[RMDB]
An RNA of 177 nucleotides, treated with DMS and 2A3 and read out base by base. It was measured as part of the RMDB library OK2TST. For 2A3, 1,674 sequencing reads were counted. The reactions ran in a buffer of 150 mM KOAc, 10 mM MgCl2 and 150 mM bicine (pH 8.5), at 24 C.

RNA sequence: GGGAACGACUCGAGUAGAGUCGAAAAGGAGGUGAUUAUCGAUACCAAUCUCAUCCCUGAUAUUGCGGUUGACGAUCCCUCAGUAAUGCUCAAUAUUCCCGCCAGUGUCACGGCGGCGACGGGGAUACGCCCAUGAGUAUUUCGAUACUCAUGGGCGAAAAGAAACAACAACAACAAC
Reactivity to DMS in 0.01 (KOAc 150mM, MgCl2 10mM, bicine 150mM(pH8.5), 24C), signal-to-noise 2, nucleotides 027 to 126: g000g010a040g020g010u020g010a030u000u000a040u010c030g000a040u000a110c160c010a020a050u010c060u000c000a100u000c120c140c170u050g000a030u000a020u000u000g000c240g000g020u000u010g010a050c010g020a010u000c000c000c000u000c030a040g010u000a030a040u000g040c040u000c020a130a150u000a090u000u000c010c000c000g010c030c010a100g010u000g010u010c140a150c150g030g000c020g000g020c050g000a030c050g040g000g000g020a120u000a050
Reactivity to 2A3 in 0.01 (KOAc 150mM, MgCl2 10mM, bicine 150mM(pH8.5), 24C), signal-to-noise 2, nucleotides 027 to 126: g120g000a020g000g040u220g080a040u040u080a040u060c010g020a020u060a300c010c020a010a010u020c010u010c030a130u200c100c020c040u010g030a030u050a040u060u060g050c210g010g030u010u050g010a050c040g000a010u020c000c000c000u010c000a010g020u140a070a050u050g000c030u000c070a050a080u060a060u120u000c010c010c000g040c020c000a120g040u120g030u220c060a040c180g060g000c020g040g020c060g010a050c020g000g010g010g020a000u030a070